[RMDB]
RNA sequence: GGGAACGACUCGAGUAGAGUCGAAAAGAUGCACGGCGUUAGUGUGAUCCGAGAGGAUUACACAUUAUAACCUAGGCUGUGCUAGACUAGGUCCAUUGUGGCUUUUGCCACUUACAGUACCUCAACUUAUCACGCAUGGAGGUACGAACCAUGCUAACAUCAGUAUCGUGUUCGCACGAUACUGAUGAAAAGAAACAACAACAACAAC
Reactivity to 2A3 in 0.01 (KOAc 150mM, MgCl2 10mM, bicine 150mM(pH8.5), 24C), signal-to-noise 6, nucleotides 027 to 156: g050a020u090g000c000a000c000g010g000c040g030u070u100a060g000u020g000u000g000a000u020c000c010g050a060g020a020g050g000a000u000u010a000c000a000c000a000u050u100a100u030a030a020c030c010u070a080g190g000c010u010g010u010g000c030u010a020g020a050c080u020a010g010g030u050c020c020a060u040u090g000u000g010g020c010u110u090u140u300g000c010c000a000c000u000u050a060c020a010g010u030a000c010c010u060c030a040a070c040u140u210a140u240c080a040c130g020c000a020u040g050g010a050g060g070u080a040c030g000a000a010c000c010a020u030g010c010u050a070a050
Reactivity to DMS in 0.01 (KOAc 150mM, MgCl2 10mM, bicine 150mM(pH8.5), 24C), signal-to-noise 3, nucleotides 027 to 156: g010a110u000g000c000a040c030g000g020c030g020u000u010a140g010u000g030u000g030a000u010c000c000g020a300g000a300g030g010a030u000u000a040c000a010c010a130u000u010a050u000a080a100c050c070u000a060g010g000c000u010g000u010g000c070u000a060g010a070c020u000a050g010g000u000c050c090a190u000u010g020u010g000g060c010u020u000u010u010g050c000c000a020c020u000u000a060c140a180g040u000a000c010c000u000c020a140a090c110u000u010a200u010c150a110c140g010c080a120u010g010g020a040g040g020u010a040c020g000a050a050c010c010a030u000g010c030u000a100a160